[RMDB]
RNA sequence: GGGAACGACUCGAGUAGAGUCGAAAAAGCCGUCUCGCUGGGUAAAAUCAGGAUGUGCCGCGGAACCCGCUCCUCAGCUAGUCACACUUCGGAAGCGCGGGCAACGCAGGUAUUAUCGUUCUAAAGGCAUUAUAAGGUACUUCGGUACCUUAUAAUGAAAAGAAACAACAACAACAAC
Reactivity to DMS in 0.01 (KOAc 150mM, MgCl2 10mM, bicine 150mM(pH8.5), 24C), signal-to-noise 7, nucleotides 027 to 126: a110g020c040c030g010u010c030u010c050g010c040u000g000g010g010u010a050a080a120a110u000c090a080g010g010a040u000g010u000g020c010c010g030c020g000g000a170a170c020c000c010g020c030u000c020c020u000c040a050g010c100u000a050g010u010c200a120c120a300c040u000u000c080g010g000a060a050g020c160g020c020g000g000g000c030a010a180c030g010c020a040g030g010u000a020u010u010a020u000c030g000u000u000c030u010a050a100a130g000g000
Reactivity to 2A3 in 0.01 (KOAc 150mM, MgCl2 10mM, bicine 150mM(pH8.5), 24C), signal-to-noise 3, nucleotides 027 to 126: a010g040c030c020g060u020c030u010c040g050c020u020g010g000g090u090a060a080a030a090u100c050a040g010g080a020u030g010u020g000c000c000g000c000g010g000a050a060c000c000c010g000c010u030c000c000u030c010a020g010c080u060a040g050u120c060a030c020a020c150u040u040c040g030g030a070a030g040c010g000c000g050g010g000c030a010a010c010g000c040a060g000g000u000a010u070u110a020u030c040g030u060u040c040u090a140a070a010g100g000
Record summary
The record gives the reactivity of an RNA of 177 nucleotides to DMS and 2A3. Reactivities are given for positions 27 through 126. The reactions ran in a buffer of 150 mM KOAc, 10 mM MgCl2 and 150 mM bicine (pH 8.5), at 24 C. For 2A3, 7,877 sequencing reads were counted.